This 177-nucleotide RNA was probed chemically with DMS and 2A3.
For 2A3 the reverse transcriptase was SuperScript II with manganese.
Values are in units of 0.01, from 0 to 300, in steps of 10.
RNA sequence: GGGAACGACUCGAGUAGAGUCGAAAAGGAUUAGGUCUCUGGUCCGAAGACACAUCAAAGUGAUACAGCAAUACCACCUUCAGUACUUGGCAAGAUUUGAUGCUCUUGUGCUCAGUGACAUCAUUCACUUCUUCCUAGCGUUCGCGCUAGGAAGAAGAAAAGAAACAACAACAACAAC
Reactivity to DMS in 0.01 (KOAc 150mM, MgCl2 10mM, bicine 150mM(pH8.5), 24C), signal-to-noise 3, nucleotides 027 to 126: g010g010a100u000u000a040g030g010u000c110u010c030u010g000g020u000c030c010g000a100a080g000a050c140a090c050a050u000c060a070a060a060g000u000g030a120u010a130c100a140g000c050a090a060u000a050c060c020a040c060c040u000u000c120a100g010u020a040c120u000u000g000g010c020a100a070g010a090u010u000u010g010a060u000g020c180u000c030u010u010g000u000g010c080u010c040a070g010u000g000a040c060a080u000c070a040u010u000c100a100
Reactivity to 2A3 in 0.01 (KOAc 150mM, MgCl2 10mM, bicine 150mM(pH8.5), 24C), signal-to-noise 2, nucleotides 027 to 126: g020g010a020u060u100a060g040g080u000c030u000c000u120g000g020u000c010c000g010a020a010g070a020c030a010c000a090u080c080a080a040a050g040u020g070a050u060a150c040a010g030c010a050a040u010a130c000c030a020c010c030u050u100c030a020g010u010a040c040u030u070g040g000c030a060a040g000a150u020u020u120g050a030u040g000c030u000c010u080u040g040u050g000c010u000c050a040g000u010g040a020c010a010u050c010a000u070u110c070a050
For DMS the reverse transcriptase was MarathonRT. Values cover nucleotides 27 to 126.